Structure probing data (DMS) for a 177-nucleotide construct.
RNA sequence: GGGAACGACUCGAGUAGAGUCGAAAACCCUUCUCUCGUCUUCCUCGGUCAACCUCUUGAGUUCCUCUUCUUCUUCCUUGCUCAGGCUCUUCCCUCCUCCAGAUAGUUGCUUCUUCUUGUUCUCGAGGCUUACAGUAUUCUUCGGAAUACUGUAAGCAAAAGAAACAACAACAACAAC
Reactivity to DMS in 0.01 (KOAc 150mM, MgCl2 10mM, bicine 150mM(pH8.5), 24C), signal-to-noise 2, nucleotides 027 to 126: c020c010c020u000u000c030u000c020u020c080g020u000c060u000u000c030c010u000c050g020g000u000c080a090a150c080c020u010c050u000u010g000a100g020u010u000c010c010u000c070u000u000c040u000u020c030u000u000c030c010u000u000g000c030u000c090a100g010g000c040u010c040u000u000c030c010c010u000c010c010u000c010c020a110g010a090u010a050g020u000u000g010c020u000u000c030u000u000c060u000u000g010u000u000c010u000c030g010a150g020
About this RNA: Source: RMDB library VIROID, as collected in RNAgym. Conditions: 150 mM KOAc, 10 mM MgCl2 and 150 mM bicine (pH 8.5), 24 C. For DMS, 2,981 sequencing reads were counted.